RNA sequence: GGGAACGACUCGAGUAGAGUCGAAAAUUGUAAAGUGGUUCAAGGAUGCUUUGAGGUCCUAGAGUUAAAAAUGGAUGAUUCUGAGUCAGUGUGGCUUGAAGAGCAUGUCACUGAGGAUCUCCUAGUCCACUGGGAUGCAGCAUUUGAUCUGCUCCAAUAAUUUUAAUCAGUUCGCUGAUUAAAAUUAAAAAGAAACAACAACAACAAC
Reactivity to DMS in 0.01 (KOAc 150mM, MgCl2 10mM, bicine 150mM(pH8.5), 24C), signal-to-noise 4, nucleotides 027 to 156: u010u000g010u000a060a110a110g020u000g010g020u000u000c050a090a110g010g010a080u000g010c020u010u000u000g010a090g010g020u000c010c010u000a060g020a140g020u000u000a010a050a090a120a110u010g000g010a060u010g010a060u000u000c000u010g010a210g020u000c010a080g020u000g040u010g010g010c020u010u010g000a120a150g010a100g020c000a050u010g000u000c030a030c050u000g010a060g010g000a080u010c010u000c010c020u000a120g010u000c000c030a100c060u000g020g010g010a050u000g020c020a050g010c040a130u010u000u010g010a100u000c030u000g010c020u020c010c020a040a300
Reactivity to 2A3 in 0.01 (KOAc 150mM, MgCl2 10mM, bicine 150mM(pH8.5), 24C), signal-to-noise 5, nucleotides 027 to 156: u110u040g050u100a070a070a070g020u030g020g010u030u030c020a020a010g060g010a050u090g080c050u110u140u190g130a100g050g040u010c010c000u030a030g020a020g070u080u140a070a070a050a050a080u110g030g010a040u110g010a020u120u020c010u060g100a090g170u070c020a000g020u020g010u030g030g020c020u050u090g140a130a090g020a030g090c020a040u220g050u090c000a000c010u000g010a010g010g000a000u000c000u010c000c000u030a050g050u010c030c010a040c040u010g020g000g010a040u130g060c020a010g000c020a060u070u030u130g030a050u020c010u010g000c010u010c040c000a000a010